The record gives the reactivity of an RNA of 207 nucleotides to 2A3. For 2A3, 1,097 sequencing reads were counted. The reactions ran in a buffer of 150 mM KOAc, 10 mM MgCl2 and 150 mM bicine (pH 8.5), at 24 C.
RNA sequence: GGGAACGACUCGAGUAGAGUCGAAAAGCUGCGUGAAACCUCGCUGUUUUCUUGGCUAACUGUCAGCGAGGUGAGGCAAGGCGGCAAAAAAAAGUUGGGAGCAGCAACGGCAAGCAAAAAAAAAGUUACAAGUUGCGAUGGUUCGCCAUCGCAACAAGGUAUAAGCGUACUUCGGUACGCUUAUACCAAAAGAAACAACAACAACAAC
Reactivity to 2A3 in 0.01 (KOAc 150mM, MgCl2 10mM, bicine 150mM(pH8.5), 24C), signal-to-noise 1, nucleotides 027 to 156: g010c000u020g000c050g080u090g080a130a070a020c000c000u010c000g000c000u000g080u000u070u080u080c070u130u170g080g000c070u030a120a070c070u180g040u110c020a000g000c000g000a000g010g000u000g000a000g000g030c020a000a000g020g000c000g010g010c050a000a000a000a000a000a000a070a000g030u080u060g000g000g020a010g010c020a000g000c000a000a000c010g060g030c020a020a010g000c040a010a040a000a010a000a000a000a120a240g020u060u070a130c070a210a040g010u000u000g000c000g000a000u000g000g030u000u000c060g000c080c010a000u000c000g000c000a000a000c000a000a000